[RMDB]
RNA sequence: GGGAACGACUCGAGUAGAGUCGAAAAGUCUCCAUUUGGGGAAGAUGGAAUUUGCAGGAAAAUGCAGGGCUAUUAUUUCUGUGCUGUGUGAGUGGGAGACAGAGCUGGUUGAGUGGCAGAUUUCCUGGCAGGGGGAGAAACAGCUAAGUGUGCCAGCACACCAAUUAGAAUUCGUUCUAAUUGGUGUAAAAGAAACAACAACAACAAC
Reactivity to 2A3 in 0.01 (KOAc 150mM, MgCl2 10mM, bicine 150mM(pH8.5), 24C), signal-to-noise 4, nucleotides 027 to 156: g040u000c030u000c050c010a110u110u110u100g030g010g010g000a040a020g020a030u040g020g050a080a090u130u080u150g030c040a020g020g070a070a060a020a060u070g050c060a040g000g020g030c070u060a040u160u010a070u030u300u030c030u040g040u030g010c020u030g010u010g010u010g100a040g010u070g010g020g000a040g010a010c040a050g040a000g030c040u050g020g050u090u090g040a050g020u060g020g000c000a000g000a080u090u070u030c020c010u020g020g000c020a050g010g030g010g010g000a030g030a040a080a010c030a020g010c020u040a050a040g050u050g010u030g070c020c010a010g010c010
Reactivity to DMS in 0.01 (KOAc 150mM, MgCl2 10mM, bicine 150mM(pH8.5), 24C), signal-to-noise 2, nucleotides 027 to 156: g020u000c010u010c010c030a290u000u000u000g030g030g030g030a040a060g010a050u000g020g010a060a080u000u000u000g010c010a090g020g010a050a040a090a090u000g030c030a050g020g030g040c050u000a040u000u010a100u000u010u000c050u000g030u000g030c000u010g030u000g020u000g040a110g030u010g030g020g000a060g030a070c120a060g000a090g050c020u000g010g030u010u010g000a120g030u000g030g020c010a060g000a180u000u000u000c040c010u000g030g000c060a080g010g000g050g020g030a050g010a120a050a030c060a100g010c030u000a050a110g020u000g040u000g010c000c020a110g000c180

Structure probing data (2A3 and DMS) for a 207-nucleotide construct. High DMS reactivity at an A or C suggests that its Watson-Crick edge is free. DMS adducts were read by reverse transcription with MarathonRT. The DMS profile rests on 4,339 reads. It was measured as part of the RMDB library OK3TST. The RNA was probed in 150 mM KOAc, 10 mM MgCl2 and 150 mM bicine (pH 8.5) at 24 C. 2A3 adducts were read by reverse transcription with SuperScript II with manganese.